[RMDB]
RNA sequence: GGGAACGACUCGAGUAGAGUCGAAAAACCUCAGUCUUCGGACUGAGGUGAGCGGAGCAUGGUGGCCGUGGGAACUCCUCCAUGGUGACAAGGGCCCACGGGGUGCGGCACGCUUCGGCGUGCCGAAUGGAUAAAGAAGAUUCGUCUUCUUUAUCCAAAAAGAAACAACAACAACAAC
Reactivity to 2A3 in 0.01 (KOAc 150mM, MgCl2 10mM, bicine 150mM(pH8.5), 24C), signal-to-noise 4, nucleotides 027 to 126: a000c010c000u000c000a000g010u000c000u020u190c220g160g000a010c000u000g000a000g000g010u010g000a020g010c060g010g040a040g040c070a070u080g050g030u070g090g080c030c000g020u010g000g020g000a060a090c040u040c030c000u000c020c030a180u210g130g030u150g020a020c050a060a040g010g000g020c000c000c000a000c010g020g010g030g000u070g010c020g020g000c010a010c020g010c000u010u040c170g100g000c000g000u010g030c010c010g000a010a030
Reactivity to DMS in 0.01 (KOAc 150mM, MgCl2 10mM, bicine 150mM(pH8.5), 24C), signal-to-noise 8, nucleotides 027 to 126: a030c000c000u000c000a010g010u000c000u000u010c210g020g000a020c000u000g000a010g000g010u000g000a040g010c080g010g010a130g010c070a080u000g010g020u000g010g000c020c010g020u000g000g010g000a060a040c040u010c030c030u000c010c020a140u000g010g000u010g010a080c190a050a040g000g000g000c010c000c010a020c020g010g010g010g010u010g010c010g010g010c010a010c010g000c000u010u010c140g020g010c000g020u000g000c000c000g000a010a030